The record gives the reactivity of an RNA of 177 nucleotides to DMS and 2A3.
For DMS, 6,561 sequencing reads were counted.
Values cover nucleotides 27 to 126.
It was measured as part of the RMDB library OK2TRN.
RNA sequence: GGGAACGACUCGAGUAGAGUCGAAAAUCACCUGGCAUGAUCUGGGACAGCGACAUCUUGGGGACAGAGAUGGGCCAGGAAGGAGGGGGCAGAGAGCUAGAGAUGGAGACCCACCACGGGGUGGGAGCGUUAGCUAACCUUUCGAGGUUAGCUAACGAAAAGAAACAACAACAACAAC
Reactivity to DMS in 0.01 (KOAc 150mM, MgCl2 10mM, bicine 150mM(pH8.5), 24C), signal-to-noise 5, nucleotides 027 to 126: u010c070a130c020c010u000g000g000c060a100u000g010a100u000c040u000g010g000g010a090c100a080g010c080g010a100c090a050u010c050u010u010g020g000g010g020a130c090a080g020a080g000a100u010g020g000g000c040c040a040g000g010a080a070g000g000a070g010g000g010g010g010c060a050g000a060g000a070g020c060u000a080g000a080g010a050u000g010g020a120g010a140c020c010c010a030c030c020a130c290g010g010g000g040u000g010g010g000a100g000
Reactivity to 2A3 in 0.01 (KOAc 150mM, MgCl2 10mM, bicine 150mM(pH8.5), 24C), signal-to-noise 3, nucleotides 027 to 126: u070c030a050c030c020u010g010g010c030a060u100g020a100u080c030u060g010g020g080a030c010a030g030c040g060a040c020a080u040c070u070u100g040g000g000g040a030c030a050g050a010g000a070u060g010g050g040c030c020a030g030g010a020a020g020g030a060g000g030g000g020g020c050a010g020a000g010a000g030c030u070a020g010a020g010a060u070g040g000a030g050a050c000c000c020a000c020c010a070c090g240g000g000g000u010g010g000g020a010g010

Record summary: The reactions ran in a buffer of 150 mM KOAc, 10 mM MgCl2 and 150 mM bicine (pH 8.5), at 24 C.